[RMDB]
RNA sequence: GGGAACGACUCGAGUAGAGUCGAAAAGUGCUUCACCAUAGGCGAUGAGUUGCUUGGCGAGCGGGGGAUGGACGACCAGCCCGUAGCCUGGGUUGGAUUCGAUGCCACCGGUAAUGGGGUUGAUCCACAAAGUAAGUUACUUCGGUAACUUACUUUGAAAAGAAACAACAACAACAAC
Reactivity to DMS in 0.01 (KOAc 150mM, MgCl2 10mM, bicine 150mM(pH8.5), 24C), signal-to-noise 9, nucleotides 027 to 126: g010u000g020c040u000u000c050a090c040c040a090u000a100g010g010c030g000a090u010g010a140g010u000u000g000c060u000u000g010g010c060g010a100g020c040g000g000g000g010g010a120u000g010g010a120c050g010a070c020c010a030g000c010c000c010g000u000a140g010c160c130u010g010g000g000u000u000g000g010a140u000u000c050g010a120u010g000c020c010a060c040c030g000g000u000a050a110u010g000g010g000g010u000u000g000a100u010c030c060a160
Reactivity to 2A3 in 0.01 (KOAc 150mM, MgCl2 10mM, bicine 150mM(pH8.5), 24C), signal-to-noise 4, nucleotides 027 to 126: g070u050g020c000u070u080c030a070c040c010a070u130a080g050g030c040g080a080u080g050a040g130u120u110g060c040u070u070g030g010c030g030a040g020c030g000g000g000g000g020a070u060g040g020a010c000g010a020c000c010a000g030c000c000c030g020u040a050g080c020c030u040g000g000g030u030u020g020g020a080u060u060c020g020a060u120g040c010c020a060c020c000g030g030u130a100a070u080g000g000g000g000u040u060g030a060u040c010c000a020
About this RNA: An RNA of 177 nucleotides, treated with DMS and 2A3 and read out base by base. It was measured as part of the RMDB library OK2TST. Values cover nucleotides 27 to 126. The RNA was probed in 150 mM KOAc, 10 mM MgCl2 and 150 mM bicine (pH 8.5) at 24 C.